[RMDB]
Chemical mapping of a 170-nucleotide RNA with DMS and 2A3.
RNA sequence: GGGAACGACUCGAGUAGAGUCGAAAAUCCAGAGGACCCCUUCAGCGAACAUGAAGCGCACUGAGCCGCCAGGAUGAGUCCAUAGCGAUAGGAGGGGAUGCUAGGAGUCGGCGGCGACCGAAGCGAGAUAGCGCAUCCUUCGGGAUGCGCAAAAGAAACAACAACAACAAC
Reactivity to DMS in 0.01 (KOAc 150mM, MgCl2 10mM, bicine 150mM(pH8.5), 24C), signal-to-noise 3, nucleotides 027 to 129: u010c000c010a120g020a130g010g000a110c110c000c060c000u000u030c100a140g030c080g030a060a080c020a140u030g020a040a040g030c140g010c080a080c130u050g000a120g050c020c030g000c060c060a250g030g010a050u030g010a130g070u040c000c000a100u050a010g000c000g000a060u070a140g030g000a210g000g000g100g000a060u040g020c000u010a030g000g030a140g030u050c070g030g050c140g020g000c020g030a040c060c050g010a070a040g020c200g010a010g040a070u000a100
Reactivity to 2A3 in 0.01 (KOAc 150mM, MgCl2 10mM, bicine 150mM(pH8.5), 24C), signal-to-noise 3, nucleotides 027 to 129: u000c000c000a030g040a110g130g000a020c000c000c050c000u070u050c000a070g010c000g110a050a050c030a070u120g060a050a020g040c050g000c040a000c070u060g090a040g000c000c000g020c010c020a060g130g040a110u240g020a030g140u000c020c000a080u030a020g010c050g060a050u010a020g010g020a030g000g000g000g010a000u060g020c010u000a000g030g000a040g030u030c020g000g020c040g000g000c000g020a000c000c050g000a050a000g010c120g080a020g040a090u080a030

Description: The reactions ran in a buffer of 150 mM KOAc, 10 mM MgCl2 and 150 mM bicine (pH 8.5), at 24 C. The data come from the RNA Mapping Database (RMDB), library 15KLIB. 2A3 adducts were read by reverse transcription with SuperScript II with manganese.